Structure probing data (DMS and 2A3) for a 177-nucleotide construct.
Values cover nucleotides 27 to 126.
RNA sequence: GGGAACGACUCGAGUAGAGUCGAAAAGAUAUGGACUCCCUAGGCUAGCUGGCAUGUCGGAAACGACAUGACAGCUUGGACCCUAUCUGGGAGUCCUAAGUCAAAGGCUGGAGUUCGCUCCAGCCAACUAGUAUUGGUAGUUCGCUACCAAUACUAGAAAAGAAACAACAACAACAAC
Reactivity to DMS in 0.01 (KOAc 150mM, MgCl2 10mM, bicine 150mM(pH8.5), 24C), signal-to-noise 7, nucleotides 027 to 126: g010a070u000a300u010g000g000a020c010u000c010c000c000u000a060g010g010c040u000a020g030c000u000g010g000c000a000u000g010u000c000g020g000a140a090a260c000g010a010c000a000u000g000a010c010a000g000c000u000u010g020g000a140c300c010c060u000a070u010c300u000g000g010g010a020g010u000c000c000u000a000a080g000u000c040a110a120a140g010g010c000u000g010g010a020g010u010u010c270g010c000u000c000c000a000g010c000c010a000a020
Reactivity to 2A3 in 0.01 (KOAc 150mM, MgCl2 10mM, bicine 150mM(pH8.5), 24C), signal-to-noise 4, nucleotides 027 to 126: g000a020u070a060u140g000g000a010c000u020c000c000c000u020a010g000g010c050u060a030g010c000u010g010g020c000a000u000g000u000c020g020g000a110a070a100c010g000a000c000a000u010g010a000c010a010g020c010u000u020g000g010a020c010c000c050u080a100u230c210u170g020g020g000a000g000u000c000c000u000a020a000g020u010c020a080a100a060g010g000c000u000g010g010a020g000u080u170c210g170c150u000c000c000a000g010c000c000a000a000

2A3 adducts were read by reverse transcription with SuperScript II with manganese. For DMS, 10,703 sequencing reads were counted. The data come from the RNA Mapping Database (RMDB), library TTRDES.